[RMDB]
RNA sequence: GGGAACGACUCGAGUAGAGUCGAAAAAAGGCAACGAGCUCACUCACGAGAUGGAUCAGGGCACCUACGAAGGUGGCAUCUUCCAGGAGAUGAGUGAUGACGGGCUGACCUGGCCGGAGAUCAUGCACGCCGGACGCACCGCGAUGCUCGACAUCGGCAUCAAAGACUUAUUCGUAAGUCUUUGAUGAAAAGAAACAACAACAACAAC
Reactivity to 2A3 in 0.01 (KOAc 150mM, MgCl2 10mM, bicine 150mM(pH8.5), 24C), signal-to-noise 4, nucleotides 027 to 156: a000a000g090g000c040a110a070c100g060a040g030c000u000c010a000c000u030c000a020c040g080a070g060a200u060g020g000a040u090c200a120g010g050g000c010a010c020c000u120a120c220g250a240a060g020g000u040g090g040c010a130u010c010u070u000c010c000a010g020g050a100g040a200u020g010a010g010u000g010a010u060g010a000c010g000g020g000c030u050g040a110c000c020u020g030g010c030c010g010g020a080g000a080u190c080a060u120g020c050a020c070g060c070c030g010g020a050c040g000c070a060c040c010g000c030g040a050u030g000c050u110c110g050a090c010a050u070c030g020g000
Reactivity to DMS in 0.01 (KOAc 150mM, MgCl2 10mM, bicine 150mM(pH8.5), 24C), signal-to-noise 3, nucleotides 027 to 156: a100a090g000g010c020a160a110c040g000a160g040c120u000c040a060c010u000c030a090c040g000a280g030a250u000g010g000a020u000c000a090g010g050g020c010a000c010c000u000a100c300g000a230a090g030g030u010g000g000c000a040u000c010u010u000c000c010a050g000g020a300g000a060u000g010a040g050u010g040a050u010g020a250c060g020g020g000c050u000g010a100c020c020u000g020g030c010c030g010g010a070g000a100u010c100a060u010g010c040a100c040g000c000c000g020g010a050c020g010c070a240c010c040g010c030g000a080u000g000c040u020c070g020a110c030a070u000c050g020g000
Structure probing data (2A3 and DMS) for a 207-nucleotide construct. The DMS profile rests on 4,738 reads. For DMS the reverse transcriptase was MarathonRT. In probing experiments dimethyl sulfate is read out at A N1 and C N3, which are open when not base-paired. Source: RMDB library OK3TST, as collected in RNAgym.